[RMDB]
Structure probing data (DMS and 2A3) for a 177-nucleotide construct.
For DMS the reverse transcriptase was MarathonRT.
Conditions: 150 mM KOAc, 10 mM MgCl2 and 150 mM bicine (pH 8.5), 24 C.
For 2A3, 1,401 sequencing reads were counted.
RNA sequence: GGGAACGACUCGAGUAGAGUCGAAAAGAUAUGGAUCAUAGCGCUCUUGGAUUUAUAGCUAAGUCGGAAACGAUAUGCUAUUGUCAGAGCGGUAUGAUCCUAAGUCAAAGGGUACUUCGGUACCCAACAAGAAUUCGUUCUUCGGAACGAAUUCUUGAAAAGAAACAACAACAACAAC
Reactivity to DMS in 0.01 (KOAc 150mM, MgCl2 10mM, bicine 150mM(pH8.5), 24C), signal-to-noise 1, nucleotides 027 to 126: g000a040u000a300u000g010g000a000u000c000a010u000a010g030c040g000c010u010c000u010u000g040g000a060u000u000u000a010u000a010g000c040u000a090a300g000u000c000g030g020a130a110a150c010g020a000u010a300u000g000c000u000a000u020u000g010u000c010a030g000a000g040c010g010g000u000a000u000g010a000u000c020c020u000a010a010g010u000c100a070a070a170g000g020g020u010a000c000u000u000c120g020g000u010a000c000c000c000a050a030
Reactivity to 2A3 in 0.01 (KOAc 150mM, MgCl2 10mM, bicine 150mM(pH8.5), 24C), signal-to-noise 1, nucleotides 027 to 126: g030a030u140a020u170g000g000a000u000c000a000u000a070g260c020g010c030u000c050u030u200g260g060a090u300u300u100a030u070a000g000c000u050a140a100g060u000c000g030g060a060a040a060c000g010a010u010a010u070g000c000u000a000u010u020g000u010c020a010g010a000g000c000g000g000u000a000u010g010a000u000c000c000u030a000a010g040u000c030a080a020a140g000g000g000u010a000c010u050u090c300g120g000u030a000c000c000c010a000a010